An RNA of 177 nucleotides, treated with 2A3 and read out base by base. The reactions ran in a buffer of 150 mM KOAc, 10 mM MgCl2 and 150 mM bicine (pH 8.5), at 24 C. It was measured as part of the RMDB library OK1LIB. For 2A3, 954 sequencing reads were counted. Values cover nucleotides 27 to 126.
RNA sequence: GGGAACGACUCGAGUAGAGUCGAAAAUUCUGAAUGUUAUCCGUCAUCCUACGACCUUCUUCGACAGCAUUCAAAAUAGAAGCAAAAUUGUCAUCGCUUAGGUUUAGCAAUUUCCGACCCAAUGCCGCUCGAUCAUGCGUUUCGACGCAUGAUCGAGAAAAGAAACAACAACAACAAC
Reactivity to 2A3 in 0.01 (KOAc 150mM, MgCl2 10mM, bicine 150mM(pH8.5), 24C), signal-to-noise 2, nucleotides 027 to 126: u000u000c010u050g110a020a020u050g040u020u090a090u180c040c070g020u040c000a130u020c000c010u040a050c040g080a150c020c000u040u080c010u120u090c010g070a000c010a000g000c010a060u060u050c030a050a000a060a160u210a160g090a060a000g020c120a130a020a050a110u100u130g070u050c010a000u080c050g010c030u030u080a020g050g060u000u020u070a000g050c000a030a040u010u000u050c000c040g000a050c000c000c000a020a020u120g040c000c050g050